[RMDB]
RNA sequence: GGGAACGACUCGAGUAGAGUCGAAAACUCGGUAUGGCAUGAUGAGAGCGAAAGUUAAGGUUCGUGUACCAUUGAGGGCUUAGAGCUACUCAUACAUACCUGUAGUCAGAUUGUACUGCGAGCCGAAAUUUUAAUCUUUAUUCGUAAAGAUUAAAAUAAAAGAAACAACAACAACAAC
Reactivity to 2A3 in 0.01 (KOAc 150mM, MgCl2 10mM, bicine 150mM(pH8.5), 24C), signal-to-noise 8, nucleotides 027 to 126: c010u010c010g000g000u010a010u020g020g020c140a050u080g010a010u010g010a050g000a010g020c010g040a070a010a000g020u030u070a080a060g030g020u010u050c030g030u080g030u100a020c000c010a010u010u090g080a100g030g060g000c000u020u040a000g010a010g000c000u070a090c000u010c000a010u010a020c000a010u020a010c000c010u010g030u060a010g010u000c030a010g000a030u010u030g070u020a000c000u020g140c000g000a000g000c000c010g020a050a030
Reactivity to DMS in 0.01 (KOAc 150mM, MgCl2 10mM, bicine 150mM(pH8.5), 24C), signal-to-noise 9, nucleotides 027 to 126: c010u010c020g000g000u000a010u010g000g020c180a050u010g000a020u010g000a100g010a070g000c010g010a090a040a030g000u000u020a090a120g000g000u000u010c210g010u010g020u030a080c030c050a140u020u030g010a120g010g000g010c000u010u010a000g010a300g000c000u000a040c010u000c000a020u000a050c010a010u000a020c010c010u030g030u040a020g000u010c060a300g000a020u010u000g000u000a020c010u010g010c000g000a000g000c010c010g000a040a070

Structure probing data (2A3 and DMS) for a 177-nucleotide construct.
Reactivities are given for positions 27 through 126.
The 2A3 profile rests on 22,083 reads.
The DMS profile rests on 47,255 reads.
DMS adducts were read by reverse transcription with MarathonRT.